The record gives the reactivity of an RNA of 207 nucleotides to 2A3.
RNA sequence: GGGAACGACUCGAGUAGAGUCGAAAACGGAAUAGAGUGAAAAGCCAGAAUUUUUGACCAUUAGCUCCCUGUUUAGAGACUUUCUGUACGAAAGGAUGACCUGCGUGCCCGCGUUCUCUUUCAGGUACAUCGAAACAAAUUUGGUCUUUCCUGUGCCGUUCCGUCCAUAGUUCGCUAUGGACGGAACAAAAGAAACAACAACAACAAC
Reactivity to 2A3 in 0.01 (KOAc 150mM, MgCl2 10mM, bicine 150mM(pH8.5), 24C), signal-to-noise 1, nucleotides 027 to 156: c020g000g030a060a110u090a140g090a020g020u060g000a010a060a020a050g060c070c030a020g030a060a050u060u040u060u060u080g050a050c040c030a040u000u180a030g020c030u060c000c020c010u020g040u030u090u100a050g000a000g000a030c000u070u140u010c060u210g070u040a020c020g050a260a080a000g010g070a060u090g060a060c000c000u010g000c000g000u020g010c030c040c010g130c020g050u150u000c010u000c010u020u070u030c040a000g000g060u000a060c010a060u130c030g050a060a030a030c060a010a100a060u110u100u060g030g000u010c130u000u020u000c010c030u050g070u140g030c020c000
Source: RMDB library OK3TST, as collected in RNAgym. The RNA was probed in 150 mM KOAc, 10 mM MgCl2 and 150 mM bicine (pH 8.5) at 24 C. 2A3 adducts were read by reverse transcription with SuperScript II with manganese. Values cover nucleotides 27 to 156.